The data come from the RNA Mapping Database (RMDB), library M2RFPK. The record gives the reactivity of an RNA of 207 nucleotides to DMS and 2A3. For DMS the reverse transcriptase was MarathonRT. 2A3 adducts were read by reverse transcription with SuperScript II with manganese. The DMS profile rests on 2,187 reads. The RNA was probed in 150 mM KOAc, 10 mM MgCl2 and 150 mM bicine (pH 8.5) at 24 C.

RNA sequence: GGGAACGACUCGAGUAGAGUCGAAAAAGCGUAGCGGUACGCCGCUACGCAAGGCGCAUUUGAACUGUAUUGUACGCCUUGCAUAAAGCAAAAGUACUAAAAAAACGUGUCGUUACGACGGCACGAAAAAACAUCCAUUGGUUCGCCAAUGGAUGAAGUGACUCUAAUACUUCGGUAUUAGAGUCACAAAAGAAACAACAACAACAAC
Reactivity to DMS in 0.01 (KOAc 150mM, MgCl2 10mM, bicine 150mM(pH8.5), 24C), signal-to-noise 1, nucleotides 027 to 156: a150g040c000g060u000a090g050c000g010g010u010a100c190g090c010c010g040c050u010a010c000g040c000a010a000g000g000c010g030c030a060u000u010u000g020a050a120c040u010g010u010a270u000u010g000u000a040c010g040c000c000u000u000g000c000a070u000a010a080a180g010c010a060a090a160a160g060u010a180c110u050a000a000a020a080a080a100a130c000g050u010g090u000c000g060u000u000a060c210g030a110c000g000g010c000a000c000g010a000a030a040a040a060a070c010a000u000c010c000a000u000u000g010g070u010u010c300g000c030c000a040a000u000g000g000a010u000g000a030a040
Reactivity to 2A3 in 0.01 (KOAc 150mM, MgCl2 10mM, bicine 150mM(pH8.5), 24C), signal-to-noise 6, nucleotides 027 to 156: a010g030c010g000u000a000g000c010g000g000u030a040c190g050c030c000g000c000u000a000c000g000c000a000a000g000g000c000g010c030a080u060u090u260g130a190a130c100u120g060u190a110u170u110g020u040a040c010g000c000c000u000u020g000c010a070u110a170a110a030g010c030a010a000a040a030g050u070a050c090u210a000a040a030a000a000a030a100c010g000u010g000u000c000g020u030u020a060c280g010a010c000g080g000c000a000c000g020a050a000a000a000a000a010c000a010u000c000c000a000u000u000g010g030u030u030c120g010c090c000a000a000u000g000g000a000u000g000a010a000